[RMDB]
RNA sequence: GGGAACGACUCGAGUAGAGUCGAAAAACGCUACCUUUCGAGGUAGCGUCACCUACUUCGCGCAACCGUCGAGUCGUUCCCAUGGUUGCGUCAAGUAGUUUGAGUGGCAGACGUUCGCGUCUGCCAAGUUGUUAUAACGGUUCGCCGUUAUAACAACAAAAGAAACAACAACAACAAC
Reactivity to DMS in 0.01 (KOAc 150mM, MgCl2 10mM, bicine 150mM(pH8.5), 24C), signal-to-noise 5, nucleotides 027 to 126: a030c000g020c000u000a010c000c000u000u000u020c160g010a030g000g000u000a010g000c000g010u000c070a070c250c000u000a000c000u000u000c300g010c010g010c010a010a020c010c010g030u010c130g010a020g000u000c010g010u000u010c000c000c000a010u000g000g000u000u000g000c000g010u000c300a010a010g000u000a010g000u010u010u000g010a140g010u000g000g010c000a010g010a010c000g020u000u010c200g010c010g020u000c000u000g000c000c010a000a020
Reactivity to 2A3 in 0.01 (KOAc 150mM, MgCl2 10mM, bicine 150mM(pH8.5), 24C), signal-to-noise 1, nucleotides 027 to 126: a020c010g010c010u000a020c000c010u040u040u150c260g130a020g000g000u010a000g010c010g020u000c000a010c000c000u000a000c000u020u010c030g020c010g000c000a000a000c000c010g230u240c140g070a010g010u000c000g000u000u010c000c000c000a010u000g000g000u000u010g000c000g010u000c010a010a000g010u020a050g040u030u150u270g170a130g020u090g020g000c000a000g000a010c000g040u070u070c220g030c010g070u000c000u000g000c000c000a000a000

Structure probing data (DMS and 2A3) for a 177-nucleotide construct. The data come from the RNA Mapping Database (RMDB), library M2PK50. The RNA was probed in 150 mM KOAc, 10 mM MgCl2 and 150 mM bicine (pH 8.5) at 24 C.